Chemical mapping of a 207-nucleotide RNA with 2A3. For 2A3, 373 sequencing reads were counted. 2A3 adducts were read by reverse transcription with SuperScript II with manganese.
[RMDB]
RNA sequence: GGGAACGACUCGAGUAGAGUCGAAAACGAGUGCAAUAAAGACGCGGUUGCCGAUCGGUAUGGAUGCCACCGUGACGGCUCAAUCACACAAGUGCCAACGAUAACGAGGCGCUCGCUAUUGAUGCGUAAAAGCGACGAUCGUUCGCGAUCGUCGCAACAGCUAUGAUGCCUUCGGGCAUCAUAGCUGAAAAGAAACAACAACAACAAC
Reactivity to 2A3 in 0.01 (KOAc 150mM, MgCl2 10mM, bicine 150mM(pH8.5), 24C), signal-to-noise 1, nucleotides 027 to 156: c030g010a050g070u180g010c100a120a080u120a160a280a040g040a000c000g010c010g010g000u020u000g000c020c010g050a030u010c040g120g020u160a120u200g060g120a020u020g040c000c000a000c010c010g050u010g040a090c070g000g000c010u010c060a000a060u090c040a030c040a020c030a170a020g000u000g000c000c000a060a120c020g110a040u090a300a000c140g000a090g000g000c000g000c000u010c010g040c040u000a040u120u270g030a090u300g030c050g060u050a000a000a000a140g010c000g000a000c010g000a000u000c000g000u080u030c090g000c030g130a000u010c000g050u040c010g000c000a000a000

The RNA was probed in 150 mM KOAc, 10 mM MgCl2 and 150 mM bicine (pH 8.5) at 24 C. Values cover nucleotides 27 to 156.